Chemical mapping of a 207-nucleotide RNA with DMS and 2A3. For DMS, 3,906 sequencing reads were counted. The data come from the RNA Mapping Database (RMDB), library OK3TST. Reactivities are given for positions 27 through 156.

RNA sequence: GGGAACGACUCGAGUAGAGUCGAAAACGUCUGAUUAAACAGGCCGAGAAAGAAGUCCAAAACAUCACCAUCAAGGCCCCACCGACCGCUGGAUGGAUAUUGUUCUCUAAUUCUGGAAUGCCGUUUGACGAAGCGUUCCUUACAGACCGAAUGGAACCGUUUAGGAACAAUUCGUUGUUCCUAAACGAAAAGAAACAACAACAACAAC
Reactivity to DMS in 0.01 (KOAc 150mM, MgCl2 10mM, bicine 150mM(pH8.5), 24C), signal-to-noise 2, nucleotides 027 to 156: c080g020u000c020u010g020a150u000u000a040a090a170c040a030g070g000c000c000g020a150g000a100a120a050g000a110a080g010u000c040c050a040a080a140a130c050a130u010c080a110c010c010a060u000c060a080a130g020g010c020c010c050c110a150c060c020g010a040c010c040g010c120u000g020g010a080u000g000g000a110u000a060u000u020g020u000u010c070u010c050u000a070a130u000u000c050u010g020g010a090a070u010g010c020c030g020u000u010u000g010a110c070g000a080a070g010c010g030u000u000c000c000u000u020a030c080a040g010a170c030c050g010a080a090u000g010g010a060a140c120
Reactivity to 2A3 in 0.01 (KOAc 150mM, MgCl2 10mM, bicine 150mM(pH8.5), 24C), signal-to-noise 5, nucleotides 027 to 156: c030g020u000c020u030g100a150u110u170a110a070a060c020a030g010g000c020c010g050a030g060a120a080a010g070a110a020g060u070c040c030a020a060a020a050c030a050u090c040a010c040c000a010u050c020a060a060g030g000c010c040c010c000a040c010c020g070a040c000c040g030c060u060g090g020a040u030g030g000a010u020a070u130u100g020u050u010c060u000c010u090a110a130u120u020c030u060g020g030a040a030u020g020c020c010g060u070u130u220g080a040c020g010a050a000g020c000g000u020u000c010c000u000u020a050c030a030g060a020c000c060g070a050a050u150g030g030a040a010c030